[RMDB]
RNA sequence: GGGAACGACUCGAGUAGAGUCGAAAAGGUUUGUGUCUAUCUUGUAUUGCAUCAUAGGAGUGAAUAAACCAGGGAGGAAAAAUGCUAAUCCUCUCUCAGAAAUUCUUUGUGCUACUGGUGAUCAUGCCACGUCUUAGUCAUUCGUGACUAAGACGUGAAAAGAAACAACAACAACAAC
Reactivity to DMS in 0.01 (KOAc 150mM, MgCl2 10mM, bicine 150mM(pH8.5), 24C), signal-to-noise 3, nucleotides 027 to 126: g010g030u000u030u010g010u010g000u010c030u000a170u010c010u000u000g000u010a080u040u050g000c070a030u010c050a000u000a060g000g010a060g010u010g000a020a040u010a000a050a120c190c230a030g000g000g000a020g000g010a000a110a070a090a170u040g030c280u010a100a120u010c000c000u000c000u000c000u020c050a030g000a060a080a040u010u000c020u050u040u000g030u020g010c010u000a040c060u010g000g020u000g010a040u000c090a000u000g010c090
Reactivity to 2A3 in 0.01 (KOAc 150mM, MgCl2 10mM, bicine 150mM(pH8.5), 24C), signal-to-noise 5, nucleotides 027 to 126: g080g000u090u100u060g060u020g030u000c040u080a140u040c030u050u060g050u060a110u040u130g050c030a020u080c020a030u110a060g040g070a030g040u100g080a080a050u120a090a050a020c030c030a010g020g000g000a000g050g050a010a050a120a030a110u250g020c040u080a090a030u000c000c000u000c000u000c010u000c000a010g090a070a110a040u060u010c020u060u100u110g100u070g060c010u020a100c070u020g000g030u010g030a060u060c020a020u110g030c000

Structure probing data (DMS and 2A3) for a 177-nucleotide construct. For DMS, 4,121 sequencing reads were counted. For 2A3, 3,130 sequencing reads were counted. DMS adducts were read by reverse transcription with MarathonRT.